Source: RMDB library TTRDEL, as collected in RNAgym. This 177-nucleotide RNA was probed chemically with DMS and 2A3. Reactivities are given for positions 27 through 126. The DMS profile rests on 3,323 reads. The RNA was probed in 150 mM KOAc, 10 mM MgCl2 and 150 mM bicine (pH 8.5) at 24 C. 2A3 adducts were read by reverse transcription with SuperScript II with manganese.

[RMDB]
RNA sequence: GGGAACGACUCGAGUAGAGUCGAAAAGAUAUGGAGAAAGGAUCCCUUGGAUUUAGGAAGUAUAUCGGAAACGAUAUACGCUUGUCAGGGACUUUCUCCUAAGUCAAAACGGCGGUUCGCCGCCGAAGUCUUUAAAUUACUUCGGUAAUUUAAAGACAAAAGAAACAACAACAACAAC
Reactivity to DMS in 0.01 (KOAc 150mM, MgCl2 10mM, bicine 150mM(pH8.5), 24C), signal-to-noise 2, nucleotides 027 to 126: g000a060u000a300u010g000g000a020g000a010a010a000g000g000a120u000c010c010c010u000u010g030g010a060u000u000u020a010g020g010a100a090g000u000a010u000a000u000c000g010g000a120a110a180c000g010a020u000a000u000a000c010g000c030u000u000g010u000c020a030g000g000g000a030c000u000u000u000c000u000c010c010u010a010a070g010u010c020a050a040a120a160c020g010g010c020g000g000u000u010c210g010c000c000g020c010c000g000a060a080
Reactivity to 2A3 in 0.01 (KOAc 150mM, MgCl2 10mM, bicine 150mM(pH8.5), 24C), signal-to-noise 2, nucleotides 027 to 126: g010a000u050a030u140g000g000a020g000a000a020a000g090g050a120u080c010c040c020u060u200g190g020a130u280u240u300a070g050g050a180a120g040u010a010u000a010u010c000g000g020a050a060a030c000g010a000u010a010u000a010c000g010c010u040u100g060u080c090a030g010g000g000a000c000u000u000u000c000u000c000c000u000a000a000g010u010c020a000a020a130a130c000g010g030c000g000g040u030u060c260g030c070c010g000c010c000g020a030a010